[RMDB]
RNA sequence: GGGAACGACUCGAGUAGAGUCGAAAAGUGACGGCCAAUUCAUGGCCCCAGUCCUGUAUUUGCAGGAUAAAACCUCUGAUUUUGCUGAUGGCAUCGAAGAGGAUAACUGGGACAGCCACGCAGCAGACUAUAGUGGCGCAUUCGUGCGCCACUAUAGAAAAGAAACAACAACAACAAC
Reactivity to 2A3 in 0.01 (KOAc 150mM, MgCl2 10mM, bicine 150mM(pH8.5), 24C), signal-to-noise 1, nucleotides 027 to 126: g000u020g030a090c080g030g050c010c010a030a050u180u130c050a090u140g000g000c000c010c000c000a010g010u010c010c000u030g000u090a300u050u200u300g010c000a000g020g020a010u090a030a110a040a040c000c000u000c040u030g090a120u060u070u080u080g000c000u110g050a210u240g070g040c020a020u020c040g070a100a010g000a000g100g000a000u120a040a080c010u000g000g000g070a010c030a060g000c000c000a000c060g030c020a040g050c010a010g000a050
Reactivity to DMS in 0.01 (KOAc 150mM, MgCl2 10mM, bicine 150mM(pH8.5), 24C), signal-to-noise 2, nucleotides 027 to 126: g050u000g000a050c090g020g010c020c030a050a160u020u020c080a120u020g020g030c020c000c000c010a050g000u000c000c010u010g030u000a200u000u000u030g020c010a000g000g010a090u000a030a080a120a050c000c000u000c000u000g010a300u000u000u000u000g030c010u000g020a210u020g000g000c000a060u000c130g020a150a040g000a010g000g000a080u000a050a090c050u010g000g010g000a040c170a210g010c010c030a020c110g000c120a090g000c060a110g000a150
An RNA of 177 nucleotides, treated with 2A3 and DMS and read out base by base. DMS adducts were read by reverse transcription with MarathonRT. 2A3 adducts were read by reverse transcription with SuperScript II with manganese.